An RNA of 177 nucleotides, treated with DMS and read out base by base. Values cover nucleotides 27 to 126.
RNA sequence: GGGAACGACUCGAGUAGAGUCGAAAAGAUAUGGACCUGCAUUGCGGGAGCGAUGUCGCGUUUGACGCAGAUCGGAAACGAUCUGCCGAGCGACCUCUCGCGAAGAACGCAAUGCAGGUCCUAAGUCCCUUACUACCUCCUUCGGGAGGUAGUAAGGAAAAGAAACAACAACAACAAC
Reactivity to DMS in 0.01 (KOAc 150mM, MgCl2 10mM, bicine 150mM(pH8.5), 24C), signal-to-noise 1, nucleotides 027 to 126: g000a080u000a280u000g000g000a010c010c000u000g030c020a000u010u000g010c010g000g050g040a040g000c010g030a020u000g010u030c000g050c000g020u010u000u010g010a170c300g010c010a020g000a050u000c000g010g010a100a130a270c000g000a020u000c010u000g000c000c020g000a060g000c000g010a010c000c000u000c030u020c010g020c020g020a050a120g010a090a260c010g000c000a010a010u010g030c000a010g000g010u000c010c000u000a010a070g000u000c030
For DMS the reverse transcriptase was MarathonRT.